Structure probing data (2A3 and DMS) for a 207-nucleotide construct. Reactivities are rounded to 0.1 and cut off at 0 and 3. 2A3 adducts were read by reverse transcription with SuperScript II with manganese. The RNA was probed in 150 mM KOAc, 10 mM MgCl2 and 150 mM bicine (pH 8.5) at 24 C. Reactivities are given for positions 27 through 156. The data come from the RNA Mapping Database (RMDB), library M2RFPK.
RNA sequence: GGGAACGACUCGAGUAGAGUCGAAAACGACAAGGGUGUAAAGAUCGCUCUUUUACUCGGCAUGAUACCACAGUUAUCGGGUCAACAGAGUAGUUGCAAAUGACAACAAUGCUCAGGGUUAUGCUCUAAAAGUUCGUACCCUUCGGGGUACGAACAAGUUCCUUACUUUGUUCGCAAAGUAAGGAACAAAAGAAACAACAACAACAAC
Reactivity to 2A3 in 0.01 (KOAc 150mM, MgCl2 10mM, bicine 150mM(pH8.5), 24C), signal-to-noise 5, nucleotides 027 to 156: c060g060a020c060a050a050g020g060g010u040g050u150a130a120a040g080a120u170c040g010c030u000c000u020u060u040u080a050c040u040c030g000g000c020a020u050g010a050u140a220c020c040a060c040a070g050u080u080a050u170c050g010g000g040u040c010a020a030c030a070g050a020g040u070a020g010u010u030g010c040a080a180a300u180g040a090c010a020a000c010a030a100u110g010c010u020c050a030g010g000g030u070u050a060u090g010c000u010c010u100a070a110a020a010g000u010u010c000g020u000a000c000c000c000u000u000c090g040g000g000g000u000a000c010g000a000a000c000a000a000
Reactivity to DMS in 0.01 (KOAc 150mM, MgCl2 10mM, bicine 150mM(pH8.5), 24C), signal-to-noise 2, nucleotides 027 to 156: c040g020a130c060a070a080g010g010g030u000g020u010a050a090a120g010a090u000c050g000c040u010c000u000u000u020u000a070c050u000c020g000g000c050a160u010g010a160u000a050c030c060a060c070a180g000u000u000a110u000c040g000g030g010u000c030a060a050c060a060g000a050g020u000a080g010u000u000g010c030a060a080a150u000g000a110c020a070a030c060a070a130u000g010c000u000c020a080g000g010g020u000u000a090u000g010c040u000c040u000a060a030a110a170g020u000u000c000g030u000a000c000c000c000u000u000c300g040g010g020g000u000a000c000g010a000a010c010a020a040